[RMDB]
RNA sequence: GGGAACGACUCGAGUAGAGUCGAAAAACCAAAACAAAACAAUUCCCGAACGCGAAAUCGCUCUCGCUGCUUAAUUAACGCAGCGACGUCCUACCCGGUUUGCCUGUAGGCUGGGAUAGGGCGUAAGACAUACAGGAUAGGAGGUUGCCAACCUCCCCCUUUCGCUCGUCUUCGGACGAGCGAAAGGAAAAGAAACAACAACAACAAC
Reactivity to 2A3 in 0.01 (KOAc 150mM, MgCl2 10mM, bicine 150mM(pH8.5), 24C), signal-to-noise 1, nucleotides 027 to 156: a000c240c030a210a040a000a000c070a040a130a000a000c130a060a120u070u070c000c000c050g040a140a020c040g000c020g210a090a080a150u290c050g030c030u030c010u000c090g010c000u010g030c010u260u110a270a250u100u080a300a060c070g000c010a000g000c000g000a000c000g000u000c000c000u000a010c010c000c010g030g000u000u000u000g050c010c000u010g010u000a000g000g040c000u000g030g000g000a000u000a020g020g000g010c000g000u000a000a000g010a000c010a000u010a000c000a000g000g000a000u000a060g000g000a010g010g100u090u250g200c090c020a000a040c050c000u030c020c000c000